The record gives the reactivity of an RNA of 177 nucleotides to 2A3 and DMS. For 2A3, 342 sequencing reads were counted. It was measured as part of the RMDB libraries RFM100 and RFMREP. The RNA was probed in 150 mM KOAc, 10 mM MgCl2 and 150 mM bicine (pH 8.5) at 24 C. Reactivities are given for positions 27 through 126. DMS (dimethyl sulfate) methylates the pairing face of unpaired adenines and cytosines.

RNA sequence: GGGAACGACUCGAGUAGAGUCGAAAAAUAUUGUUUUCUCUCUCUCCAUAAACAAAUAGUAUUUUUGAUAUGACUGCUUGUUAUUAAAAUGAUUGUUUCAGUUGUCUUUGUUUGGAUAUCAUAUUUGUGUUUAUACCUUUUUCGAAAGGUAUAAACAAAAAGAAACAACAACAACAAC
Reactivity to 2A3 in 0.01 (KOAc 150mM, MgCl2 10mM, bicine 150mM(pH8.5), 24C), signal-to-noise 1, nucleotides 027 to 126: a000u040a040u060u050g070u010u040u030u050c010u040c000u000c000u010c000u010c000c000a130u080a040a120a010c050a020a000a050u060a040g250u040a120u010u040u010u150u180g090a060u100a000u110g040a000c090u060g080c000u050u080g070u040u050a150u080u210a090a070a050a050u220g130a170u100u030g040u010u010u040c030a070g000u030u000g060u030c040u030u040u050g050u070u030u150g070g000a010u060a030u170c060a000u010a050u110u050u020g040
Reactivity to DMS in 0.01 (KOAc 150mM, MgCl2 10mM, bicine 150mM(pH8.5), 24C), signal-to-noise 4, nucleotides 027 to 126: a080u010a080u010u010g010u000u000u000u010c010u000c010u010c020u010c010u000c010c050a080u010a070a060a050c030a010a010a040u000a020g020u000a020u010u010u020u010u020g000a070u020a030u010g010a050c010u010g010c060u010u000g000u000u010a090u010u010a050a050a070a080u010g000a100u010u000g010u000u000u000c030a130g000u010u000g000u000c070u000u010u010g010u000u010u010g010g010a060u000a030u010c040a050u010a120u010u000u000g010